[RMDB]
RNA sequence: GGGAACGACUCGAGUAGAGUCGAAAAGUCUAGCGAUUUAGGGAUCCGAUCCGGGUCGCAGAACUCAACUGCAUGAGUAGACACGCAAGUCGCGUAUUGGCCGAACGGCCAAGGAUCUGCUAGACGACCCUAGGCUCAUGUUCGCAUGAGCCUAGGGAAAAGAAACAACAACAACAAC
Reactivity to DMS in 0.01 (KOAc 150mM, MgCl2 10mM, bicine 150mM(pH8.5), 24C), signal-to-noise 2, nucleotides 027 to 126: g000u000c000u000a020g080c010g040a090u010u000u010a240g020g020g010a050u010c000c000g030a230u010c140c020g030g010g000u000c000g000c050a090g020a050a090c050u030c080a050a070c150u000g030c210a170u000g000a020g000u000a080g050a090c130a070c080g000c030a070a170g010u020c090g000c010g000u000a250u000u000g030g010c000c000g010a110a090c200g020g030c000c020a010a000g000g010a050u000c000u000g040c000u000a010g000a010c010g000a220
Reactivity to 2A3 in 0.01 (KOAc 150mM, MgCl2 10mM, bicine 150mM(pH8.5), 24C), signal-to-noise 1, nucleotides 027 to 126: g000u000c000u000a000g010c000g040a030u020u000u100a190g090g020g000a020u000c000c030g040a060u060c040c080g000g050g020u000c040g000c130a010g050a030a020c020u030c050a020a110c100u160g080c090a140u080g010a000g040u070a010g030a050c050a010c020g000c040a200a070g200u180c090g000c040g040u070a060u060u020g010g000c040c010g090a270a090c190g030g000c000c030a000a010g000g000a000u000c040u180g010c000u000a000g000a000c000g010a010